RNA sequence: GGGAACGACUCGAGUAGAGUCGAAAAUUGAGGAAAAAUCGGUCCCCAUGACGGUGGACCGCGUGCUGGACGACCUGGGCCUGGGCCGCUUCCAGUGGAAGCUGCUCGCCAUCUGUGGGCUGACCUGCGGGUUAGAACUAUUCGUAGUUCUAACCCGAAAAGAAACAACAACAACAAC
Reactivity to DMS in 0.01 (KOAc 150mM, MgCl2 10mM, bicine 150mM(pH8.5), 24C), signal-to-noise 3, nucleotides 027 to 126: u000u000g010a080g010g000a030a070a030a070a100u000c020g000g010u000c000c000c010c020a180u010g010a090c190g010g040u010g030g010a020c000c010g030c110g020u000g010c030u000g000g000a090c080g000a070c050c030u010g000g000g020c060c090u020g010g000g040c000c070g010c030u000u000c000c020a140g010u000g010g010a030a040g010c010u010g000c010u000c040g020c040c040a050u000c070u000g010u000g000g010g030c030u000g010a060c040c020u010g010
Reactivity to 2A3 in 0.01 (KOAc 150mM, MgCl2 10mM, bicine 150mM(pH8.5), 24C), signal-to-noise 2, nucleotides 027 to 126: u070u030g020a080g000g090a120a050a000a000a090u110c030g000g020u010c020c010c040c020a070u300g160a060c140g010g080u170g050g020a000c000c000g000c010g030u070g020c040u040g010g040a020c010g000a040c030c010u030g010g020g060c000c080u060g000g020g020c020c020g000c040u030u000c010c010a120g060u160g140g010a000a010g000c010u000g010c000u010c000g020c010c010a060u050c040u060g080u080g030g000g000c020u020g030a040c000c010u050g020